[RMDB]
RNA sequence: GGGAACGACUCGAGUAGAGUCGAAAAACUGUGUCAAAGACCACGUACAUUGGUCACCUUCUCACAUUAUACAGGGAAACGAUUGGCAGCAGACACAUAGACGAAGAGACGUACAAUGAGAUAACAUCGGUUAGCCGCGAUCUGGGCCAUAGGCAUAGAGUCUGCUUAAGUUCGCUUAAGCAGACUCAAAAGAAACAACAACAACAAC
Reactivity to 2A3 in 0.01 (KOAc 150mM, MgCl2 10mM, bicine 150mM(pH8.5), 24C), signal-to-noise 3, nucleotides 027 to 156: a000c070u070g020u060g040u100c060a090a110a020g010a030c000c020a010c030g180u180a060c040a150u070u130g000g000u040c030a050c020c000u050u030c040u030c020a070c000a120u070u300a060u100a110c080a040g000g000g030a040a110a020c040g090a090u050u030g040g000c020a040g000c020a020g070a030c000a000c010a110u110a070g070a030c040g010a040a010g020a020g020a050c030g030u040a040c050a080a110u090g010a040g000a090u130a130a020c040a080u080c040g020g000u040u040a020g020c020c000g030c030g030a010u000c000u050g000g020g000c000c010a030u040a060g000g000c000a020u050a060
Reactivity to DMS in 0.01 (KOAc 150mM, MgCl2 10mM, bicine 150mM(pH8.5), 24C), signal-to-noise 1, nucleotides 027 to 156: a120c070u010g030u000g020u020c020a060a100a130g000a080c050c020a070c110g010u020a050c090a140u000u000g020g010u000c020a080c080c050u010u000c010u020c060a060c080a100u010u000a130u000a110c150a080g010g000g040a100a040a100c050g000a090u010u010g010g000c000a070g020c030a100g000a050c000a020c030a120u060a080g000a100c040g020a100a120g000a180g000a110c020g000u000a050c160a040a050u000g020a070g040a110u000a160a020c020a060u000c010g000g000u000u000a080g060c010c030g020c040g000a180u030c030u010g000g040g070c000c010a060u000a050g010g040c040a070u000a270